RNA sequence: GGGAACGACUCGAGUAGAGUCGAAAAGGCCGGAGGGUUUGCCAAGGCAGACAUUGAGAUGGCUGGACCCAUGGCUGCAGUAGGCUUGCUAAUUGUCAGCUAUGUGGUCUCGGGAAAGAGUGUGGACCUAGGUAGACGGUUUCGACCGUCUACCUAGAAAAGAAACAACAACAACAAC
Reactivity to DMS in 0.01 (KOAc 150mM, MgCl2 10mM, bicine 150mM(pH8.5), 24C), signal-to-noise 4, nucleotides 027 to 126: g020g010c020c010g000g010a180g020g000g000u000u020u020g000c000c050a130a170g020g010c000a020g010a040c040a060u010u010g000a160g010a100u020g010g020c010u000g000g000a050c010c000c010a000u000g000g000c000u000g010c010a040g010u000a120g010g010c160u070u040g010c000u000a060a030u010u000g010u050c020a010g020c000u000a010u000g010u020g020g010u000c000u020c100g020g000g000a250a050a040g000a030g030u010g010u000g010g000a120c170
Reactivity to 2A3 in 0.01 (KOAc 150mM, MgCl2 10mM, bicine 150mM(pH8.5), 24C), signal-to-noise 4, nucleotides 027 to 126: g040g010c040c010g010g020a110g080g010g000u060u140u140g020c000c030a040a050g140g000c040a020g060a030c040a060u070u300g080a110g060a130u040g060g000c020u030g020g000a000c000c020c000a000u010g030g000c000u010g020c020a010g020u070a020g040g140c250u130u270g050c010u170a140a090u180u060g160u300c040a000g000c000u010a000u060g160u300g030g000u000c020u020c020g000g010g020a050a270a020g030a030g000u110g040u060g030g000a040c010